Description
This 207-nucleotide RNA was probed chemically with 2A3. The 2A3 profile rests on 743 reads. Reactivities are given for positions 27 through 156. High 2A3 reactivity points to a flexible backbone, as in loops and unpaired stretches.
RNA sequence: GGGAACGACUCGAGUAGAGUCGAAAAACGGUCAUAUACGUAUGACCGAAUUAGCAUAACAGGGCCACCCCAAAGCGUUCACAUUGUGGCCCCUGUCAGAUUCUGGUAAAUCUGCGAGUUCUGCUAAAUUAGGUAACUCUCUUCGGAGAGUUACCAAGAUACACAGGUCGUUCGCGACCUGUGUAUCAAAAGAAACAACAACAACAAC
Reactivity to 2A3 in 0.01 (KOAc 150mM, MgCl2 10mM, bicine 150mM(pH8.5), 24C), signal-to-noise 2, nucleotides 027 to 156: a000c000g010g000u000c010a000u040a000u020a030c280g050u020a010u010g000a000c000c000g020a000a020u040u000a000g000c000a000u040a050a000c010a060g000g000g000c000c000a010c010c060c000c020a000a250a040g070c070g050u160u160c150a160c110a210u080u170g000u010g000g000c000c000c000c000u030g070u080c010a010g010a030u060u090c050u300g070g030u130a050a090a000u020c000u000g030c070g010a070g000u060u090c050u040g010c000u010a090a150a200u250u130a040g000g000u000a000a000c000u010c000u000c000u060u050c100g090g010a000g000a000g000u000u000a000c010c000a000a000

Reactivities are rounded to 0.1 and cut off at 0 and 3.